Chemical mapping of a 177-nucleotide RNA with 2A3 and DMS. The DMS profile rests on 10,277 reads. As a SHAPE reagent, 2A3 marks flexible, mostly unpaired nucleotides at the ribose 2'-OH. Values are in units of 0.01, from 0 to 300, in steps of 10. Reactivities are given for positions 27 through 126. It was measured as part of the RMDB library RFMREP. The 2A3 profile rests on 7,062 reads.

RNA sequence: GGGAACGACUCGAGUAGAGUCGAAAAAAGUGGAGCGGCGCAAGGCUCAGUAACGGGCGAGUAUUUGAUCUCCUAGAGUGGAUAUCCUCUGUAACCGGAGGGCAAAACACAAGAUGAGCGAUUGACGGAUAGUAUGAUUGUUCGCAAUCAUACUAUCAAAAGAAACAACAACAACAAC
Reactivity to 2A3 in 0.01 (KOAc 150mM, MgCl2 10mM, bicine 150mM(pH8.5), 24C), signal-to-noise 5, nucleotides 027 to 126: a000a010g080u090g010g010a050g010c030g040g000c020g020c070a060a040g090g010c010u010c060a020g040u030a060a030c060g010g020g010c040g010a030g010u060a150u060u090u090g070a050u030c010u020c030c000u050a050g020a020g140u040g020g000a040u040a030u100c000c000u000c000u020g030u050a060a030c040c030g010g000a010g000g000g010c020a050a100a030a010c050a010c010a020a010g060a100u090g010a020g040c050g080a130u030u130g030a050c050g040
Reactivity to DMS in 0.01 (KOAc 150mM, MgCl2 10mM, bicine 150mM(pH8.5), 24C), signal-to-noise 8, nucleotides 027 to 126: a060a050g010u010g010g010a100g020c060g020g010c090g000c080a070a080g010g010c030u000c030a060g010u010a080a100c140g010g010g010c060g010a080g010u010a070u000u000u010g010a090u000c020u000c010c020u000a080g020a140g020u000g000g000a110u000a110u010c030c000u000c010u000g000u000a080a120c300c070g000g000a040g000g000g010c120a050a040a070a090c050a030c060a080a110g000a110u000g000a060g010c030g010a080u010u010g000a130c240g010